RNA sequence: GGGAACGACUCGAGUAGAGUCGAAAACGAGAACGCCGUCCUGGAAGCCGAGCGGUUCGCGGUGUUCGCCGCGCUGCUGACCGGCGCCGAGUAUCCGCAGGCGGCGUUGGCCAAGGCGUGGGUGCAAACAGCACUCUCAAUUCGUUGAGAGUGCUGUAAAAGAAACAACAACAACAAC
Reactivity to 2A3 in 0.01 (KOAc 150mM, MgCl2 10mM, bicine 150mM(pH8.5), 24C), signal-to-noise 1, nucleotides 027 to 126: c050g020a010g030a030a000c000g010c030c020g010u170c000c020u030g030g080a130a010g010c000c000g000a020g000c000g070g000u070u070c020g030c020g000g020u090g070u200u210c150g000c010c010g000c000g000c030u040g020c010u010g050a120c000c010g000g010c010g000c010c030g000a000g040u080a070u070c030c030g000c040a000g000g060c030g000g040c000g000u010u000g010g010c000c020a050a030g080g000c090g050u070g010g020g030u060g030c020a100a110
Reactivity to DMS in 0.01 (KOAc 150mM, MgCl2 10mM, bicine 150mM(pH8.5), 24C), signal-to-noise 3, nucleotides 027 to 126: c120g000a190g000a050a020c010g000c000c010g020u020c010c010u000g010g010a090a160g010c010c010g000a070g020c010g000g020u000u000c030g010c000g020g010u000g000u010u010c230g010c000c000g000c010g020c130u010g000c030u000g000a070c040c020g020g000c000g000c120c050g000a110g030u010a060u000c130c050g020c030a060g000g000c010g000g000c000g010u000u000g000g010c030c070a090a150g000g010c090g030u000g010g010g040u000g030c100a140a100